[RMDB]
RNA sequence: GGGAACGACUCGAGUAGAGUCGAAAAGCAGCGCGUCUUUGUAGAGCGGACGAAAGCUCUGGCUUCGGGCCCCCUCUCAAGGGUAGCAGACGAUCGAGUCAGGGUCGACUCGAGAGGUGGGCCAUACGCGGGUUUGUAGCUUCGGCUGCGAACCCGCAAAAGAAACAACAACAACAAC
Reactivity to DMS in 0.01 (KOAc 150mM, MgCl2 10mM, bicine 150mM(pH8.5), 24C), signal-to-noise 3, nucleotides 027 to 126: g020c040a020g020c020g050c030g020u000c030u030u020u000g020u010a040g020a090g020c080g010g000a060c140g000a080a080a100g000c010u000c040u020g020g010c120u000u000c100g020g010g020c020c000c000c000c030u010c000u010c000a070a080g010g000g010u010a160g030c090a110g000a130c010g010a040u010c140g020a200g010u000c130a070g000g000g000u040c000g000a100c030u000c030g000a040g000a030g020g000u050g020g000g010c010c010a010u020a020c270
Reactivity to 2A3 in 0.01 (KOAc 150mM, MgCl2 10mM, bicine 150mM(pH8.5), 24C), signal-to-noise 4, nucleotides 027 to 126: g030c010a020g030c030g010c040g040u050c050u030u080u140g090u070a020g020a010g060c020g000g030a020c010g090a120a040a000g000c000u000c010u050g040g020c010u070u050c070g000g000g000c000c000c000c010c000u000c000u020c010a070a110g020g020g010u050a040g040c050a020g020a050c010g030a060u170c080g060a040g170u060c040a040g030g090g070u030c020g020a040c000u030c040g000a000g000a000g000g020u150g030g000g040c000c000a010u010a010c010

The record gives the reactivity of an RNA of 177 nucleotides to DMS and 2A3.
For DMS, 4,294 sequencing reads were counted.
For 2A3 the reverse transcriptase was SuperScript II with manganese.